RNA sequence: GGGAACGACUCGAGUAGAGUCGAAAAAUUUGCAAUUGGCUUUAUGCAAUCUAUUAAACUCUUCUAUAACUUGUUCUAUCUCUUUCAUACUAUAGUAUAAAAGCCUACUCCUCCUCCUUUUGCCACAGACUAUGCUAAUUUUCGAAUUAGCAUAGUCAAAAGAAACAACAACAACAAC
Reactivity to DMS in 0.01 (KOAc 150mM, MgCl2 10mM, bicine 150mM(pH8.5), 24C), signal-to-noise 3, nucleotides 027 to 126: a070u000u010u000g010c020a060a060u000u010g020g000c040u020u000u000a110u020g020c020a030a030u000c050u010a080u010u010a110a130a080c020u000c010u000u000c030u000a090u010a090a120c130u010u000g010u000u000c050u010a090u000c040u000c010u010u000u010c020a050u000a070c030u010a080u000a100g020u000a070u010a040a060a050a040g000c030c010u000a100c040u010c030c020u000c010c020u000c010c020u000u000u000u000g010c030c040a060c200a120
Reactivity to 2A3 in 0.01 (KOAc 150mM, MgCl2 10mM, bicine 150mM(pH8.5), 24C), signal-to-noise 3, nucleotides 027 to 126: a000u100u080u120g000c020a030a080u080u050g060g020c010u080u100u080a040u070g010c000a020a040u020c010u070a120u100u120a200a120a070c030u010c000u070u000c020u090a120u050a220a190c040u050u080g040u130u020c010u040a140u060c030u020c010u050u160u060c050a080u080a120c050u150a060u050a180g040u000a040u010a220a050a010a010g020c010c000u000a050c010u030c020c000u000c020c000u010c000c000u000u060u010u070g060c020c030a080c040a030